[RMDB]
RNA sequence: GGGAACGACUCGAGUAGAGUCGAAAAGUUGACGAUGAACGCGUAGUCGCGGGUGCGGACACCGAGAUGCGCAAUAGACCGCAGUCGCUGGGUGGCGGGCCGGAUGACGCCCAGGGCGUCGGCGACGUCUUUUGUUUAACUUCGGUUAAACAAAAGAAAAAGAAACAACAACAACAAC
Reactivity to DMS in 0.01 (KOAc 150mM, MgCl2 10mM, bicine 150mM(pH8.5), 24C), signal-to-noise 6, nucleotides 027 to 126: g020u010u000g000a100c110g010a100u010g010a100a120c150g000c040g030u020a070g030u020c020g000c030g000g000g040u000g010c020g000g010a090c030a110c040c030g000a070g000a060u000g010c060g030c060a130a090u040a090g010a090c090c020g000c050a080g000u010c040g030c030u000g010g000g020u010g000g000c070g000g000g000c040c030g000g000a060u020g000a070c050g000c010c020c060a100g010g010g010c030g020u000c010g010g010c030g000a070c100g020
Reactivity to 2A3 in 0.01 (KOAc 150mM, MgCl2 10mM, bicine 150mM(pH8.5), 24C), signal-to-noise 5, nucleotides 027 to 126: g090u060u050g030a050c070g040a110u120g100a120a040c050g020c020g040u060a060g140u070c020g010c030g030g000g020u130g050c030g010g050a030c020a030c050c020g020a030g010a060u030g010c010g000c020a040a070u070a120g070a040c030c030g020c020a010g050u070c030g000c110u040g030g000g020u030g030g020c050g000g030g000c020c010g030g010a060u100g010a020c020g010c000c000c010a040g030g060g000c010g010u030c000g010g020c000g020a040c020g030
Structure probing data (DMS and 2A3) for a 177-nucleotide construct. It was measured as part of the RMDB library OK1LIB. The RNA was probed in 150 mM KOAc, 10 mM MgCl2 and 150 mM bicine (pH 8.5) at 24 C. The DMS profile rests on 15,700 reads.